[RMDB]
RNA sequence: GGGAACGACUCGAGUAGAGUCGAAAAGAUAUGGAAUGGUUAUGGGAGCUGCUGAUCGGAAACGAUCAGGCAGCGAAGAACAUACCAUUCCUAAGUCAAAAGGAUUCUGUACUUCGGUACAGAAUCCGCCAUGUGUAAGGUUCGCCUUACACAUGGCAAAAGAAACAACAACAACAAC
Reactivity to 2A3 in 0.01 (KOAc 150mM, MgCl2 10mM, bicine 150mM(pH8.5), 24C), signal-to-noise 5, nucleotides 027 to 126: g000a000u010a010u050g000g010a000a000u010g010g090u300u300a010u020g030g020g090a290g030c010u000g000c020u020g000a000u000c000g000g000a000a000a000c010g000a000u000c010a020g260g040c010a000g000c010g010a030a030g020a010a000c000a000u000a000c000c000a000u000u000c000c000u000a000a000g010u000c030a040a000a090a200g020g000a010u010u000c000u000g010u010a010c000u050u140c300g140g010u000a000c000a000g000a000a000u010c000c000
Reactivity to DMS in 0.01 (KOAc 150mM, MgCl2 10mM, bicine 150mM(pH8.5), 24C), signal-to-noise 4, nucleotides 027 to 126: g010a010u000a030u030g000g000a010a000u000g000g000u000u020a010u010g020g000g010a080g030c000u000g010c000u000g000a010u000c000g020g000a010a010a010c000g010a000u000c000a030g020g030c010a000g020c000g010a040a100g010a150a300c000a010u000a010c000c000a010u000u000c000c000u000a000a080g000u000c010a090a110a140a190g000g000a010u000u000c000u000g010u000a010c000u000u030c240g030g000u000a010c000a010g000a000a010u000c000c010